[RMDB]
RNA sequence: GGGAACGACUCGAGUAGAGUCGAAAAGAGGAUUCAACGAGCUUCGUAGCAACGAUAGCAACGUAGCUUUUGCUACGACCCUAGCUAUCGAGGGAAGCUACGUCCCAUGCUCGAGGGGAGAAUCCGAACCAUUUUAGGAUUUCGAUCCUAAAAUGGUAAAAGAAACAACAACAACAAC
Reactivity to 2A3 in 0.01 (KOAc 150mM, MgCl2 10mM, bicine 150mM(pH8.5), 24C), signal-to-noise 7, nucleotides 027 to 126: g130a030g010g010a010u010u010c030a100a050c050g010a010g020c010u050u040c020g020u040a000g000c010a050a100c020g000a000u000a010g000c010a030a050c000g000u000a000g000c010u110u200u210u300g010c000u010a010c000g170a190c050c000c010u030a030g000c000u000a000u010c000g010a080g050g100g060a120a030g000c000u020a020c000g030u040c030c030c010a030u140g000c000u000c000g030a070g030g060g020g000a110g010a010a010u000c010c000g000a010
Reactivity to DMS in 0.01 (KOAc 150mM, MgCl2 10mM, bicine 150mM(pH8.5), 24C), signal-to-noise 8, nucleotides 027 to 126: g010a220g010g010a020u000u000c010a150a170c040g010a050g010c010u000u010c010g020u000a030g010c030a160a180c030g000a010u000a010g000c010a130a160c000g010u000a000g000c000u010u000u010u010g020c010u000a000c000g010a110c150c150c160u010a110g000c010u000a010u000c010g000a140g010g000g010a120a110g000c020u000a020c030g000u000c110c080c090a120u010g000c010u000c010g010a100g010g010g000g010a200g010a030a010u000c000c000g010a140